[RMDB]
RNA sequence: GGGAACGACUCGAGUAGAGUCGAAAAGAUAUGGAUCUCGUGGUCAGCUUUGAUCUCGGAAACGAGGGAGCUGCUACACGAGGAUCCUAAGUCAAAACCAGUUGUCUGCUUCGGCAGACAACUGGAACUCUGUAAAAGCGUUCGCGCUUUUACAGAGAAAAGAAACAACAACAACAAC
Reactivity to DMS in 0.01 (KOAc 150mM, MgCl2 10mM, bicine 150mM(pH8.5), 24C), signal-to-noise 2, nucleotides 027 to 126: g000a050u010a300u010g020g010a010u010c000u000c010g050u000g020g000u000c020a020g010c000u000u000u020g000a090u040c000u000c010g000g000a130a090a250c010g020a000g010g000g000a000g010c000u010g000c190u010a160c010a010c010g000a050g000g000a000u000c010c000u000a040a100g000u000c000a050a030a100a190c010c000a010g020u000u010g030u000c010u030g010c000u000u000c220g020g000c010a020g000a010c020a000a000c000u000g000g000a020a030
Reactivity to 2A3 in 0.01 (KOAc 150mM, MgCl2 10mM, bicine 150mM(pH8.5), 24C), signal-to-noise 1, nucleotides 027 to 126: g010a040u120a060u250g010g000a010u000c000u000c030g010u000g000g040u110c030a000g030c020u300u180u160g100a130u120c000u000c010g000g030a110a100a080c010g000a010g000g020g020a010g000c010u000g000c060u140a150c000a000c000g000a040g180g000a020u040c010c000u010a210a030g070u050c050a000a020a120a190c000c000a010g030u000u000g000u000c000u000g010c010u070u060c240g170g000c000a010g010a000c000a000a000c000u000g000g000a000a000